Chemical mapping of a 177-nucleotide RNA with DMS. For DMS, 889 sequencing reads were counted. The data come from the RNA Mapping Database (RMDB), library TTRINS. The RNA was probed in 150 mM KOAc, 10 mM MgCl2 and 150 mM bicine (pH 8.5) at 24 C.

[RMDB]
RNA sequence: GGGAACGACUCGAGUAGAGUCGAAAAGAUAUGGAACCACGAGCUGCAGCUACCCACCGUUUGGUAUUUAACUCGGAAACGAGUUAAAUACCAAACGAGGCUGACCCAGCGAGUGGUUCCUAAGUCACCUUACUUGGAUGUUCGCAUCCAAGUAAGGAAAAGAAACAACAACAACAAC
Reactivity to DMS in 0.01 (KOAc 150mM, MgCl2 10mM, bicine 150mM(pH8.5), 24C), signal-to-noise 2, nucleotides 027 to 126: g020a130u000a300u000g000g010a000a000c010c010a060c000g030a300g030c000u000g020c100a010g000c080u030a100c140c030c070a300c140c000g020u000u030u000g000g010u020a000u000u000u000a000a020c000u000c010g030g040a190a070a140c000g040a000g000u000u020a000a000a040u000a000c000c000a000a000a000c000g010a030g010g000c000u010g010a170c190c300c060a000g030c000g000a230g040u000g010g010u000u000c000c010u000a000a060g000u010c090a250